Chemical mapping of a 207-nucleotide RNA with DMS and 2A3.
The RNA was probed in 150 mM KOAc, 10 mM MgCl2 and 150 mM bicine (pH 8.5) at 24 C.
The 2A3 profile rests on 1,120 reads.
Source: RMDB library OK3TST, as collected in RNAgym.

RNA sequence: GGGAACGACUCGAGUAGAGUCGAAAAGUAAUAGAUAUGCGGAUGACGAGAAAGGGUGCGCUGAUAUCCGCGACGAAUGCUAGCAGUAAAUAGAAUAGCGCUCCUAAUACAACUAGCAACAAAAGGAUAAGGUAUCGUGAUGUCAAUCACAUUGCGAUGCUCCUAUGGAGUUCGCUCCAUAGGAGCAAAAAGAAACAACAACAACAAC
Reactivity to DMS in 0.01 (KOAc 150mM, MgCl2 10mM, bicine 150mM(pH8.5), 24C), signal-to-noise 1, nucleotides 027 to 156: g010u000a100a100u020a150g000a090u010a140u000g000c020g030g010a070u000g010a230c120g010a160g000a060a120a110g000g020g010u000g000c020g010c000u020g010a240u010a050u000c020c030g050c020g000a060c040g020a110a120u000g000c050u000a000g020c030a050g000u000a060a080a190u000a070g000a090a170u000a140g000c000g030c030u000c000c000u010a090a110u050a130c040a120a000c030u000a060g000c030a010a100c130a040a030a150a280g000g000a210u010a070a140g060g030u000a020u000c010g000u010g000a000u040g020u000c040a070a090u000c250a020c030a000u000u000g010c000g020a020
Reactivity to 2A3 in 0.01 (KOAc 150mM, MgCl2 10mM, bicine 150mM(pH8.5), 24C), signal-to-noise 2, nucleotides 027 to 156: g020u030a010a080u070a150g030a010u150a060u220g010c010g010g000a030u050g000a070c160g050a020g100a230a110a020g050g020g000u070g000c000g020c000u030g040a020u020a000u080c000c000g000c030g000a040c030g010a150a010u100g000c020u030a000g010c040a000g030u070a010a120a150u160a100g070a080a070u050a050g010c020g010c030u060c000c010u010a080a020u150a030c010a030a100c020u050a000g000c010a000a020c030a060a130a030a010g070g060a090u060a140a130g040g020u020a010u020c000g000u000g010a010u050g000u020c060a040a040u130c030a020c000a010u010u040g000c000g010a000